[RMDB]
RNA sequence: GGGAACGACUCGAGUAGAGUCGAAAAACUGAGUAUGGUGCUUUGGAGUGUGUCCAAUUUCAGACACUGGAGAGCAUGGCUCAACACCUACAGCUAAAAGGUCAUUGGAAUAAAAGUCUAUUGACCCCGGCGUUAGUCAGUUCGCUGACUAACGCCGAAAAGAAACAACAACAACAAC
Reactivity to 2A3 in 0.01 (KOAc 150mM, MgCl2 10mM, bicine 150mM(pH8.5), 24C), signal-to-noise 2, nucleotides 027 to 126: a010c000u000g000a000g060u070a160u300g010g100u050g010c100u050u020u040g270g090a140g080u130g020u000g070u060c000c080a230a300u040u190u300c140a100g030a000c050a000c050u030g010g020a010g000a000g110c000a000u020g020g000c000u000c000a000a140c000a060c000c000u120a100c170a020g170c040u100a260a000a000a000g020g000u000c000a000u020u010g010g010a010a130u100a220a160a000a000g160u020c020u070a000u000u000g000a000c040c000c040

Notes:
Chemical mapping of a 177-nucleotide RNA with 2A3. Values are in units of 0.01, from 0 to 300, in steps of 10. Reactivities are given for positions 27 through 126. 2A3 adducts were read by reverse transcription with SuperScript II with manganese. The reactions ran in a buffer of 150 mM KOAc, 10 mM MgCl2 and 150 mM bicine (pH 8.5), at 24 C. The data come from the RNA Mapping Database (RMDB), library OK1LIB. High 2A3 reactivity points to a flexible backbone, as in loops and unpaired stretches.